[RMDB]
RNA sequence: GGGAACGACUCGAGUAGAGUCGAAAAUCGGCUUCAUCACUCCUGACGAUGGCUCUAAAGACGUGUUCGUACACUUCUCUGCUAUCCAGAACGAUGGCUACAAAUCCCUGGACGAAGGUCAGAAAGUAAGCCAAACGCUAUUCGUAGCGUUUGGCUUAAAAGAAACAACAACAACAAC
Reactivity to 2A3 in 0.01 (KOAc 150mM, MgCl2 10mM, bicine 150mM(pH8.5), 24C), signal-to-noise 1, nucleotides 027 to 126: u230c000g030g000c000u170u090c000a050u000c010a020c030u020c000c040u080g090a040c060g090a050u030g050g030c050u060c230u300a080a070a000g000a010c030g000u000g020u000u080c150g150u300a000c000a000c000u010u000c020u000c020u130g000c000u000a000u000c000c020a000g000a000a000c120g000a000u020g000g000c020u000a020c020a000a190a000u000c000c000c000u000g090g000a000c050g000a030a030g160g000u000c000a050g250a080a040a000g100u080
Reactivity to DMS in 0.01 (KOAc 150mM, MgCl2 10mM, bicine 150mM(pH8.5), 24C), signal-to-noise 1, nucleotides 027 to 126: u070c070g000g020c030u070u040c060a040u000c000a300c050u000c070c020u000g140a020c240g000a000u000g010g000c000u000c170u000a160a050a000g040a040c000g000u000g000u010u000c130g000u080a100c080a000c000u000u000c050u000c110u010g010c000u000a000u000c000c040a020g010a220a170c300g010a040u040g000g020c000u000a160c080a190a000a160u020c000c000c050u010g010g000a000c070g000a120a060g000g000u010c020a110g000a000a100a020g000u010

The data come from the RNA Mapping Database (RMDB), library RFM100. Chemical mapping of a 177-nucleotide RNA with 2A3 and DMS. For 2A3, 525 sequencing reads were counted. For DMS the reverse transcriptase was MarathonRT. 2A3 adducts were read by reverse transcription with SuperScript II with manganese. The reactions ran in a buffer of 150 mM KOAc, 10 mM MgCl2 and 150 mM bicine (pH 8.5), at 24 C.